[RMDB]
RNA sequence: GGGAACGACUCGAGUAGAGUCGAAAAGAAAAGGGAGGAUCGGAUGGGAAGAGUAUAUCCCAUGGGAAUCCCUGGGUUCCCCUCGUGUCCAGCCCCUCCCCGGUCCGAUGGAAGGGGGACUCCGGGAAAACGUGCAGAUUCGUCUGCACGAAAAGAAACAACAACAACAAC
Reactivity to DMS in 0.01 (KOAc 150mM, MgCl2 10mM, bicine 150mM(pH8.5), 24C), signal-to-noise 9, nucleotides 027 to 129: g010a030a040a050a040g000g040g000a050g010g030a080u030c120g030g020a030u000g030g020g040a040a070g030a090g030u020a050u010a110u010c020c000c010a060u030g040g030g000a140a090u020c000c010c010u000g010g010g020u020u020c030c020c010c010u000c050g030u050g030u000c030c030a120g010c000c010c010c010u030c010c010c010c030g020g010u030c030c150g020a100u040g030g050a080a030g000g010g010g000g000a040c010u040c020c050g000g010g050a040a040a060a110
Reactivity to 2A3 in 0.01 (KOAc 150mM, MgCl2 10mM, bicine 150mM(pH8.5), 24C), signal-to-noise 9, nucleotides 027 to 129: g050a010a050a010a000g020g010g010a040g010g010a050u080c050g030g030a020u040g020g010g010a060a030g060a020g130u090a050u040a050u160c010c020c020a030u070g040g010g060a050a120u050c000c000c000u000g000g010g000u020u030c000c000c000c000u020c020g160u180g060u010c020c020a030g020c040c000c000c000u050c020c010c000c000g010g010u020c020c010g010a030u120g060g070a060a060g000g000g000g000g000a010c010u000c010c010g000g000g000a020a040a010a020